[RMDB]
RNA sequence: GGGAACGACUCGAGUAGAGUCGAAAAUCUAUGAUGAUACUGUCUGAUGACGGUGUCGUUUGCUAUAAUAGUGAUUAUGCAGCUAAGGGUUACAUUGCUGGAAUACAGAAUUUUAAGGAAACGCUGUCAAUCGGGGAGUUCGCUCCCCGAAAAAGAAACAACAACAACAAC
Reactivity to 2A3 in 0.01 (KOAc 150mM, MgCl2 10mM, bicine 150mM(pH8.5), 24C), signal-to-noise 4, nucleotides 027 to 129: u120c030u040a090u100g010a020u030g000a010u010a050c010u000g060u050c000u060g220a100u300g000a020c000g020g020u000g010u010c030g010u010u050u110g030c020u040a020u000a300a170u070a170g070u060g130a020u020u130a030u170g000c000a020g010c000u000a030a080g070g010g020u080u080a030c010a110u040u200g070c020u010g020g040a050a020u030a050c020a020g070a070a050u030u080u120u080a080a020g110g010a010a030a000c030g010c050u020g020u030c060a010a010
Reactivity to DMS in 0.01 (KOAc 150mM, MgCl2 10mM, bicine 150mM(pH8.5), 24C), signal-to-noise 5, nucleotides 027 to 129: u020c050u020a030u000g050a040u040g020a040u000a000c040u020g020u020c020u070g040a160u050g000a020c010g000g000u010g040u030c030g030u010u000u010g010c090u020a090u050a180a080u000a100g090u020g000a180u050u020a060u040g000c020a030g020c030u020a070a110g020g040g030u040u010a070c120a080u000u000g080c050u020g000g010a070a050u050a080c030a030g040a080a030u010u050u010u060a090a150g010g000a040a050a060c100g020c020u010g030u030c120a070a150
Conditions: 150 mM KOAc, 10 mM MgCl2 and 150 mM bicine (pH 8.5), 24 C. An RNA of 170 nucleotides, treated with 2A3 and DMS and read out base by base. The 2A3 profile rests on 5,210 reads. Source: RMDB library 15KLIB, as collected in RNAgym. Values cover nucleotides 27 to 129.